[RMDB]
RNA sequence: GGGAACGACUCGAGUAGAGUCGAAAACUACAUAGUUUCGACUAUGUAGAAACCAUUAGGAAGCAUGCAGAUGCAUAUGGACGAGGGCAACUAACCUUUUGCGAACAGCAGGUUUCGACCUGCUGAAGUAAAGAUGUCUAUUCGUAGACAUCUUUACAAAAGAAACAACAACAACAAC
Reactivity to DMS in 0.01 (KOAc 150mM, MgCl2 10mM, bicine 150mM(pH8.5), 24C), signal-to-noise 9, nucleotides 027 to 126: c000u000a000c000a000u000a000g010u000u000u010c190g010a040c010u000a000u000g010u000a010g010a080a090a180c030c010a090u010u010a100g010g010a150a090g020c040a030u000g000c110a080g000a070u000g020c030a060u000a050u000g010g010a090c070g000a060g000g010g010c040a040a060c110u010a080a090c070c040u000u000u000u000g020c110g010a090a200c020a010g010c000a000g000g010u000u000u010c170g000a020c000c000u000g010c000u000g000a010a070
Reactivity to 2A3 in 0.01 (KOAc 150mM, MgCl2 10mM, bicine 150mM(pH8.5), 24C), signal-to-noise 8, nucleotides 027 to 126: c010u000a000c000a000u010a010g010u020u060u100c170g050a010c000u010a000u010g000u000a000g000a020a010a000c000c000a030u060u140a070g100g060a120a040g030c040a020u080g010c030a020g040a270u090g030c030a040u040a070u180g050g020a020c050g030a040g000g040g000c020a080a040c060u080a050a080c020c010u050u040u110u200g080c080g050a090a040c010a010g000c000a000g010g020u020u060u110c190g060a020c000c000u000g000c000u010g000a010a000
The record gives the reactivity of an RNA of 177 nucleotides to DMS and 2A3. Source: RMDB library M2PK50, as collected in RNAgym. Reactivities are given for positions 27 through 126. For DMS, 14,604 sequencing reads were counted. Conditions: 150 mM KOAc, 10 mM MgCl2 and 150 mM bicine (pH 8.5), 24 C.